[RMDB]
RNA sequence: GGGAACGACUCGAGUAGAGUCGAAAACGCCAAGCACAGCGUGGCAACACGUGAAAGUCGUCUGCAAUGCCGACAUCACCUGCGGGUGAGACGACCCACCUUUUCUCCGUCCCGCUAACCGGGACUUGAGUAUGUGACUUUUCGAAGUCACAUACUCAAAAGAAACAACAACAACAAC
Reactivity to 2A3 in 0.01 (KOAc 150mM, MgCl2 10mM, bicine 150mM(pH8.5), 24C), signal-to-noise 9, nucleotides 027 to 126: c060g020c010c010a060a020g060c050a060c050a110g030c020g010u020g020g000c030a060a040c040a030c050g040u060g060a070a050a020g040u030c010g010u010c020u060g060c070a070a100u170g070c030c010g040a060c020a080u070c010a020c010c020u060g020c150g060g000g000u020g020a030g010a010c030g030a030c010c010c000a060c010c010u050u090u090u030c050u030c040c030g010u010c000c000c000g010c090u100a080a070c070c010g010g000g010a010c000u000u020
Reactivity to DMS in 0.01 (KOAc 150mM, MgCl2 10mM, bicine 150mM(pH8.5), 24C), signal-to-noise 3, nucleotides 027 to 126: c120g030c000c010a120a100g000c030a050c100a280g000c020g000u020g000g010c170a140a080c060a040c040g040u010g000a060a100a130g020u000c010g000u010c000u010g000c100a110a090u020g000c030c030g000a040c050a120u010c010a020c040c020u000g040c080g010g020g000u020g000a040g000a080c070g000a110c070c010c020a130c030c020u000u000u000u000c020u000c120c110g000u000c010c010c000g010c160u040a060a200c300c010g000g000g020a030c010u000u020
An RNA of 177 nucleotides, treated with 2A3 and DMS and read out base by base.
DMS adducts were read by reverse transcription with MarathonRT.
Source: RMDB libraries RFM100 and RFMREP, as collected in RNAgym.